[RMDB]
RNA sequence: GGGAACGACUCGAGUAGAGUCGAAAACUAUUCCACCGUUUGCAUUGAGGAGAGACAGAAAUCAGAGGUCAAUGGACUUUCCCAGGAUGCAAUAGUUCAUGUGUGUUCAGCCUGAAUUGUCUGCGCCCCAUGUGUGCAUCCAGGGACAACAGGGAAAACCCACCUAGGGAUUCGUCCCUAGGUGGGUAAAAGAAACAACAACAACAAC
Reactivity to 2A3 in 0.01 (KOAc 150mM, MgCl2 10mM, bicine 150mM(pH8.5), 24C), signal-to-noise 1, nucleotides 027 to 156: c040u040a110u180u040c010c010a030c040c100g020u000u060u060g070c040a020u090u020g040a080g020g030a040g000a040g030a030c020a040g070a080a110a010u190c040a040g050a050g090g000u040c070a030a060u100g030g030a000c000u140u050u000c000c000c000a030g010g010a000u000g000c000a030a110u090a200g090u060u130c020a010u010g110u000g020u020g040u080u040c010a020g010c040c000u210g160a300a120u150u010g070u030c000u020g000c000g000c040c000c000c000a010u020g090u000g030u020g020c000a000u000c020c020a040g000g000g000a000c020a060a050c060a050g040g030g130a000a020a180